Source information: Chemical mapping of a 177-nucleotide RNA with DMS and 2A3. For DMS, 792 sequencing reads were counted. The data come from the RNA Mapping Database (RMDB), library RFM100. The RNA was probed in 150 mM KOAc, 10 mM MgCl2 and 150 mM bicine (pH 8.5) at 24 C.
RNA sequence: GGGAACGACUCGAGUAGAGUCGAAAAGAAAGAGCGGGUACAGAAUGGAUUUUGGAAGAGGGAGUCACCACUGGACCUCCAAGGAAGCCACGUGCAGACAUCUACAACCUUCGAUCUCCUGACGAAACGCUCGACAGAAUUUCGAUUCUGUCGAGCGAAAAGAAACAACAACAACAAC
Reactivity to DMS in 0.01 (KOAc 150mM, MgCl2 10mM, bicine 150mM(pH8.5), 24C), signal-to-noise 1, nucleotides 027 to 126: g000a000a120a100g000a180g070c070g050g000g040u010a000c080a150g000a050a060u000g030g010a030u000u050u000u000g030g000a040a130g050a260g000g000g000a150g000u000c030a230c230c000a010c050u000g000g000a030c000c030u040c130c130a100a170g000g080a090a040g000c000c050a090c130g000u000g060c300a150g000a010c000a010u050c000u000a000c040a180a200c110c040u010u000c000g000a000u030c000u000c000c060u000g000a210c100g000a000a120a090
Reactivity to 2A3 in 0.01 (KOAc 150mM, MgCl2 10mM, bicine 150mM(pH8.5), 24C), signal-to-noise 2, nucleotides 027 to 126: g010a000a090a010g020a000g060c030g040g000g040u030a140c030a060g070a090a100u080g030g020a060u000u080u150u280g080g030a070a000g040a030g070g000g000a030g060u040c020a010c040c000a020c020u010g040g060a040c000c000u000c000c030a000a000g050g000a060a000g040c010c010a040c030g030u020g000c060a040g050a070c000a130u000c000u030a070c040a040a080c000c000u000u010c020g000a040u020c000u000c010c000u000g080a130c000g050a040a040a000